RNA sequence: GGGAACGACUCGAGUAGAGUCGAAAAUUUAGGAGAUGAGUAUCAUGUUGCUUUUUAAUAAUAACUGGAAAAGCUCAGAAGGAGAGGGCUUGGAAUUUAUUAGGGGACUCCUAAAACUCCUCUGGAGAAGUAAACCACAAUUCGUUGUGGUUUACUUAAAAGAAACAACAACAACAAC
Reactivity to DMS in 0.01 (KOAc 150mM, MgCl2 10mM, bicine 150mM(pH8.5), 24C), signal-to-noise 1, nucleotides 027 to 126: u000u000u010a040g010g010a000g030a160u010g010a100g000u010a070u020c190a150u010g000u010u010g000c010u000u010u000u010u000a030a120u000a060a060u010a050a110c140u000g000g000a160a040a050a060g000c010u000c000a040g000a200a160g000g000a110g010a040g000g000g020c120u000u010g010g000a230a080u000u000u000a010u000u000a070g010g020g040g000a040c030u010c010c000u010a010a010a040a190c080u000c040c040u000c060u000g000g000a150g000